[RMDB]
RNA sequence: GGGAACGACUCGAGUAGAGUCGAAAAUUCAUAGAAAUCUACUCAUGAUGUUUUUGUAUUCUAGGGAAUUUGCCUGUCAGUAUGAAUCUGAGAUUUAACUGUAAGGAAAUAACUGUGUUUAUUCUGAAGGAGGCAAUGAAACUCAGUUGGGGAGGCACUGAGCUAUUACUUUCGAGUAAUAGCUCAGAAAAGAAACAACAACAACAAC
Reactivity to 2A3 in 0.01 (KOAc 150mM, MgCl2 10mM, bicine 150mM(pH8.5), 24C), signal-to-noise 1, nucleotides 027 to 156: u060u050c000a000u060a080g080a030a210a110u010c000u020a020c010u010c000a030u110g070a070u090g070u030u060u020u040u120g030u070a300u060u050c020u010a010g020g010g060a080a140u130u090u170g060c000c000u020g050u030c010a020g000u050a150u210g020a000a010u030c160u130g080a050g030a220u020u090u050a020a000c020u000g060u130a010a010g000g070a020a070a070u050a020a020c010u030g000u010g000u190u040u040a030u010u060c010u030g020a050a050g050g030a020g070g000c000a060a020u100g000a050a000a000c050u020c030a020g000u050u060g000g000g000g030a020g020g050c040a000